The record gives the reactivity of an RNA of 170 nucleotides to 2A3 and DMS. It was measured as part of the RMDB library 15KLIB. The reactions ran in a buffer of 150 mM KOAc, 10 mM MgCl2 and 150 mM bicine (pH 8.5), at 24 C. For DMS, 6,539 sequencing reads were counted.

RNA sequence: GGGAACGACUCGAGUAGAGUCGAAAACCAACCACCAAGUUUGGAGAGCACUCCGGGCCGAAUGGUCGAGUAGCACUCAGAGGGAGGAAUCCACACGGAGUAGAGCAGAGAAAUCACCUCCAGAGGACAAGUUUCCGCUUCGGCGGAAACAAAAGAAACAACAACAACAAC
Reactivity to 2A3 in 0.01 (KOAc 150mM, MgCl2 10mM, bicine 150mM(pH8.5), 24C), signal-to-noise 4, nucleotides 027 to 129: c000c000a000a020c020c050a030c010c030a040a020g050u010u170u150g030g000a010g000a010g070c020a040c090u000c010c020g000g000g000c000c020g130a150a150u290g000g030u000c000g000a010g000u070a030g000c020a010c030u040c020a000g010a070g040g050g000a010g000g010a030a030u030c010c000a080c010a020c110g020g000a030g060u120a070g000a030g020c060a040g040a000g050a100a080a030u110c040a090c050c000u020c000c000a010g000a020g000g010a000c000a030a050
Reactivity to DMS in 0.01 (KOAc 150mM, MgCl2 10mM, bicine 150mM(pH8.5), 24C), signal-to-noise 4, nucleotides 027 to 129: c030c030a070a100c160c120a140c100c120a150a110g000u000u000u000g000g000a000g030a140g090c120a000c020u030c010c150g000g000g000c030c140g020a090a100u050g040g030u000c120g050a070g010u040a050g050c030a170c080u010c050a000g020a100g070g030g010a060g000g050a090a100u020c030c030a040c190a160c230g000g090a130g020u010a100g070a140g030c020a090g000a070g020a000a000a000u060c070a200c060c000u040c020c040a090g020a110g000g000a060c170a070a080